RNA sequence: GGGAACGACUCGAGUAGAGUCGAAAAGAUAUGGAUGAUAUACGCUACUGGACUAUGCGAUAAGUCCGCUUCGGAAACGAAGCAGGACUUUUGACGCAUUCUCCAGUAGCGUAUAUCAUCCUAAGUCCAAAGGUACUAGGUUCGCCUAGUACCUUUGAAAAGAAACAACAACAACAAC
Reactivity to DMS in 0.01 (KOAc 150mM, MgCl2 10mM, bicine 150mM(pH8.5), 24C), signal-to-noise 5, nucleotides 027 to 126: g010a100u000a300u000g010g010a020u000g000a010u010a000u000a010c000g010c000u000a000c000u000g000g010a020c070u000a000u000g010c010g010a180u000a030a010g000u000c000c010g010c000u000u000c010g000g000a170a110a280c000g010a010a010g030c000a090g050g000a020c000u000u000u000u000g020a250c090g010c000a010u000u000c120u000c000c000a000g010u000a000g000c000g000u000a000u000a000u000c000a000u010c000c010u000a020a080g000u010c030
The record gives the reactivity of an RNA of 177 nucleotides to DMS.
The data come from the RNA Mapping Database (RMDB), library TTRINS.
The reactions ran in a buffer of 150 mM KOAc, 10 mM MgCl2 and 150 mM bicine (pH 8.5), at 24 C.